[RMDB]
RNA sequence: GGGAACGACUCGAGUAGAGUCGAAAACGAUCCUCGAGAGAGGAUCGACGAGUCUUCGGACUCGAUUACCGCGAGGAUGUGCCGCGGGGCUACGAUGGUAUUGUGGGAAAGAAUACCAUUGUACCUUCUUGUCGUAGCCGAACAACUAGCACGUCAAGCGACCAGUAUGGUUCGCCAUACUGGUCGCAAAAGAAACAACAACAACAAC
Reactivity to 2A3 in 0.01 (KOAc 150mM, MgCl2 10mM, bicine 150mM(pH8.5), 24C), signal-to-noise 2, nucleotides 027 to 156: c030g000a010u010c000c000u010c010g040a070g000a000g000a000g040g000a000u000c000g000a010c010g000a000g000u000c070u070u160c260g140g010a010c010u010c010g000a030u080u160a080c000c000g000c000g020a050g250g010a040u050g000u000g000c000c000g020c010g000g020g010g030c010u000a000c000g000a020u050g000g010u010a010u010u010g010u020g030g000g090a050a150a160g160a080a040u070a030c000c030a000u000u040g000u000a000c000c000u110u280c180u140u300g030u010c000g000u000a010g000c000c000g000a050a000c020a050a040c030u080a000g000c000a000c000g010u000c000a000a050